This 207-nucleotide RNA was probed chemically with DMS and 2A3. For 2A3 the reverse transcriptase was SuperScript II with manganese. For 2A3, 2,730 sequencing reads were counted. For DMS, 6,138 sequencing reads were counted.

[RMDB]
RNA sequence: GGGAACGACUCGAGUAGAGUCGAAAACUUUGAAAGUGUUAAAUUAAUGCAUGAAGAAUUGAAGCAGGUCGGCAUUCAUGGAACUAAACGGGAGAUUACAGAUAUAUUGUAUCCGCAUUCAAUUGGGCAUGAGAUUGGACUAGAGAUUCACGAUUGAUCAAAAUACUGAUUUCGAUCAGUAUUUUGAAAAAGAAACAACAACAACAAC
Reactivity to DMS in 0.01 (KOAc 150mM, MgCl2 10mM, bicine 150mM(pH8.5), 24C), signal-to-noise 3, nucleotides 027 to 156: c030u000u000u010g020a080a080a180g030u000g010u000u000a060a090a150u000u010a080a090u010g020c040a090u010g000a080a110g010a120a140u000u010g010a080a120g010c030a070g040g000u000c040g030g010c050a070u000u010c050a090u020g000g000a080a090c060u010a040a080a070c040g000g010g010a120g000a100u000u000a110c030a040g030a100u000a090u010a100u000u010g030u000a090u000c010c030g000c030a110u000u010c070a050a110u010u000g000g020g030c050a070u000g020a060g000a100u000u000g040g020a080c070u010a080g000a260g000a120u000u000c010a090c060g010a210u010u000g020a240
Reactivity to 2A3 in 0.01 (KOAc 150mM, MgCl2 10mM, bicine 150mM(pH8.5), 24C), signal-to-noise 4, nucleotides 027 to 156: c020u110u040u110g080a110a080a040g030u030g050u090u120a100a070a090u130u190a060a030u140g010c020a010u070g060a050a110g040a080a110u100u100g020a040a000g020c030a010g030g000u050c010g050g020c010a010u040u030c030a010u080g030g030a050a030c050u040a130a080a020c050g030g030g000a060g010a050u070u100a020c020a010g100a020u060a010u030a040u260u090g010u030a030u020c010c000g000c020a020u050u090c020a040a120u070u070g020g020g010c010a010u050g000a010g010a050u020u060g010g000a000c000u010a030g010a010g010a100u040u070c040a010c110g070a070u020u080g030a040